[RMDB]
RNA sequence: GGGAACGACUCGAGUAGAGUCGAAAAUGCACCUUGGGGGCUGAGGUUAGCUGCCACAUGACCAGCAGGUCGCUGUCUGCGGGACUCAUCCAUCCUUCGGCCAGGUCGCCGUCUCCCCACAGAGAAGGUAUAGCCCGAAAUUCGUUUCGGGCUAUACAAAAGAAACAACAACAACAAC
Reactivity to 2A3 in 0.01 (KOAc 150mM, MgCl2 10mM, bicine 150mM(pH8.5), 24C), signal-to-noise 6, nucleotides 027 to 126: u110g020c030a040c030c000u050u080g020g000g020g020g000c030u020g020a040g020g050u070u120a030g020c040u050g040c020c000a070c020a070u160g030a060c020c030a010g090c020a030g040g070u090c070g020c070u030g030u060c020u030g020c030g010g010g000a020c010u010c030a060u000c030c000a030u030c000c010u040u070c020g020g000c010c010a040g020g020u050c040g000c030c000g030u020c040u000c010c000c040c000a040c030a030g170a000g030a100a040g090
Reactivity to DMS in 0.01 (KOAc 150mM, MgCl2 10mM, bicine 150mM(pH8.5), 24C), signal-to-noise 3, nucleotides 027 to 126: u040g010c040a040c010c000u010u010g020g040g010g000g040c060u000g000a110g020g040u000u000a060g030c040u000g000c030c060a040c100a070u020g010a150c040c040a070g000c070a090g010g000u010c050g000c040u000g000u020c050u020g000c040g010g000g000a100c050u000c060a050u020c050c030a160u020c010c060u010u010c070g010g000c000c060a040g010g000u000c040g020c070c000g010u020c030u020c010c000c000c050a070c130a080g000a150g030a060a080g000
The record gives the reactivity of an RNA of 177 nucleotides to 2A3 and DMS. High 2A3 reactivity points to a flexible backbone, as in loops and unpaired stretches. DMS adducts were read by reverse transcription with MarathonRT. Values are in units of 0.01, from 0 to 300, in steps of 10. The RNA was probed in 150 mM KOAc, 10 mM MgCl2 and 150 mM bicine (pH 8.5) at 24 C.